[RMDB]
Structure probing data (2A3 and DMS) for a 207-nucleotide construct. It was measured as part of the RMDB library M2RFPK. As a SHAPE reagent, 2A3 marks flexible, mostly unpaired nucleotides at the ribose 2'-OH.
RNA sequence: GGGAACGACUCGAGUAGAGUCGAAAAAGCAUUUAGCCUGAUUACUCUUUAAAUCAAAUCAGGCAAUAGAGAGAAACUCGAGAGGUGAAAACCCCACAGCAUUCUGAAAUGUAUUUGGGAGUAUUCUAUGACUAUUGGGUCUUCGGACCCAAUAGAACUUAAUUCACAUGUUCGCAUGUGAAUUAAGAAAAGAAACAACAACAACAAC
Reactivity to 2A3 in 0.01 (KOAc 150mM, MgCl2 10mM, bicine 150mM(pH8.5), 24C), signal-to-noise 1, nucleotides 027 to 156: a010g130c040a010u120u170u210a020g000c000c000u010g020a060u010u070a160c040u080c040u140u210u240a160a170a110u220c080a090a070a000u000c000a000g000g000c000a000a000u000a000g010a000g000a000g000a010a000a100c020u000c040g050a070g000a040g030g080u000g000a050a030a020a020c010c000c020c010a000c030a010g020c010a010u110u000c040u300g080a180a190a060u040g010u030a220u070u120u020g030g010g010a100g030u010a070u020u000c020u000a040u150g060a080c010u010a010u010u000g010g000g000u010c010u010u010c100g080g000a010c000c000c000a000a000u000a000g000a000a010
Reactivity to DMS in 0.01 (KOAc 150mM, MgCl2 10mM, bicine 150mM(pH8.5), 24C), signal-to-noise 1, nucleotides 027 to 156: a130g020c030a070u000u020u000a200g020c000c030u000g010a030u010u000a180c070u000c080u000u000u000a090a050a140u000c070a050a070a070u030c010a010g020g000c010a010a020u000a110g050a090g020a290g000a180a110a080c010u000c060g000a050g050a160g000g000u060g010a110a130a150a060c000c010c030c000a030c030a050g000c010a080u000u020c020u000g020a080a120a010u000g000u000a110u000u000u000g020g000g000a120g000u000a030u000u010c030u000a080u010g010a120c000u020a010u000u000g020g040g010u000c010u020u000c300g050g050a050c000c010c010a000a000u010a000g000a020a050